[RMDB]
RNA sequence: GGGAACGACUCGAGUAGAGUCGAAAAGAUAUGGACAUUGCGAAACACCAUGAUUCGCGAUAAGUAGCGAUCGGAAACGAUCGGCUACUUUUGACGCGAUAGUGGUGUUUCGCAAUGUCCUAAGUCACCAAUCGCUAAUGUUCGCAUUAGCGAUUGGAAAAGAAACAACAACAACAAC
Reactivity to DMS in 0.01 (KOAc 150mM, MgCl2 10mM, bicine 150mM(pH8.5), 24C), signal-to-noise 1, nucleotides 027 to 126: g030a070u010a300u020g000g010a000c000a020u000u000g020c000g000a020a010a020c000a020c010c000a000u000g010a300u000u000c000g020c000g000a110u010a000a020g040u010a020g020c000g010a020u000c000g030g000a200a100a230c000g000a020u010c000g000g050c010u000a000c000u000u000u000u000g060a260c100g030c000g000a020u000a100g010u000g000g030u000g010u000u000u000c000g000c000a010a000u000g000u000c000c000u000a000a060g000u030c030a300